Structure probing data (2A3 and DMS) for a 177-nucleotide construct. The data come from the RNA Mapping Database (RMDB), libraries RFM100 and RFMREP. 2A3 adducts were read by reverse transcription with SuperScript II with manganese. DMS adducts were read by reverse transcription with MarathonRT.
[RMDB]
RNA sequence: GGGAACGACUCGAGUAGAGUCGAAAAAUAUACGCUAUGGAUUUCGAGUUGCAGACAAUACGUCUGUAAUUUGCAAGACGAGUCGUACUGGCUCUGAAGUUACCUACGGGUAGUUCAGGUAAUGGGGGUUCUAGUGUAAAUUCGUUUACACUAGAACAAAAGAAACAACAACAACAAC
Reactivity to 2A3 in 0.01 (KOAc 150mM, MgCl2 10mM, bicine 150mM(pH8.5), 24C), signal-to-noise 9, nucleotides 027 to 126: a000u190a010u020a030c040g010c040u050a090u150g090g020a080u050u050u040c010g010a010g010u000u000g010c000a000g010a000c020a120a230u210a280c140g000u000c000u000g000u000a000a000u000u010u020g010c030a020a020g050a040c010g010a010g020u110c010g000u020a040c040u040g080g010c030u000c010u080g030a050a050g140u130u010a010c000c000u030a070c200g050g000g000u030a020g010u010u020c010a010g000g030u070a140a090u160g050g000g010g000
Reactivity to DMS in 0.01 (KOAc 150mM, MgCl2 10mM, bicine 150mM(pH8.5), 24C), signal-to-noise 9, nucleotides 027 to 126: a090u020a120u020a040c060g010c030u000a040u010g000g010a140u010u000u000c010g000a020g010u000u010g010c010a000g000a010c000a150a130u030a140c250g000u000c000u000g010u000a000a000u000u000u000g010c130a050a050g010a170c030g000a020g010u010c010g010u000a050c090u000g010g010c070u010c000u000g000a020a030g010u030u000a010c010c000u000a120c200g030g010g020u000a010g000u000u000c010a010g000g000u010a060a090u010g000g000g010g000